[RMDB]
RNA sequence: GGGAACGACUCGAGUAGAGUCGAAAAAAUCUAUCCUGGUCAACAGACUCCAUGAUUUGGAAAGGCGCUUGACCAUCAUGCCGAACACGUUCACAGCGACAUCAUGCCGAACACGUUCACAGCGACAGCAUCGCAUGGAGUUCGCUCCAUGCGAUGCAAAAGAAACAACAACAACAAC
Reactivity to 2A3 in 0.01 (KOAc 150mM, MgCl2 10mM, bicine 150mM(pH8.5), 24C), signal-to-noise 2, nucleotides 027 to 126: a000a000u130c090u160a100u060c010c000u090g000g000u050c010a000a000c000a070g090a080c020u000c000c020a120u230g150a300u300u200u170g100g010a120a130a080g060g130c020g010c160u000u030g000a000c050c000a030u130c010a000u050g020c070c040g040a030a100c110a060c110g000u010u000c080a140c030a140g000c000g110a060c010a070u260c000a010u190g030c000c030g000a000a000c090a000c020g030u000u000c000a010c030a090g160c060g050a040c010a040